[RMDB]
RNA sequence: GGGAACGACUCGAGUAGAGUCGAAAACGAUUAGCAUUCGUGCUAAUCGAAUCAGGUAGUACCAAUCUCUAUUACCUGUAGUGGCCAACGUCCGGACAGAGAAUCGAGUCCUGUUCGCAGGACUCAAAGUCACUAAUAACUUCGGUUAUUAGUGACUAAAAGAAACAACAACAACAAC
Reactivity to DMS in 0.01 (KOAc 150mM, MgCl2 10mM, bicine 150mM(pH8.5), 24C), signal-to-noise 7, nucleotides 027 to 126: c020g000a010u000u000a000g000c000a030u000u010c200g000u000g010c000u000a000a000u000c010g000a060a060u000c010a010g000g000u000a010g010u000a040c170c110a100a130u010c080u000c090u000a020u000u000a010c010c010u000g010u000a060g010u010g010g010c040c040a060a100c110g010u000c030c030g000g000a080c150a080g000a110g010a090a110u010c150g000a010g010u000c000c000u000g000u000u010c160g010c010a010g000g000a010c000u000c000a010a040
Reactivity to 2A3 in 0.01 (KOAc 150mM, MgCl2 10mM, bicine 150mM(pH8.5), 24C), signal-to-noise 8, nucleotides 027 to 126: c010g000a000u000u010a000g000c020a010u020u060c210g100u060g000c000u000a000a010u000c000g000a010a060u070c010a000g020g010u020a000g000u010a050c080c040a100a190u040c050u010c010u060a030u030u030a020c010c000u010g020u040a080g050u060g080g010c040c020a080a040c070g060u020c030c010g040g050a040c050a060g090a010g040a090a100u200c120g000a010g000u010c000c010u000g020u020u040c250g000c060a000g000g000a000c000u000c000a020a000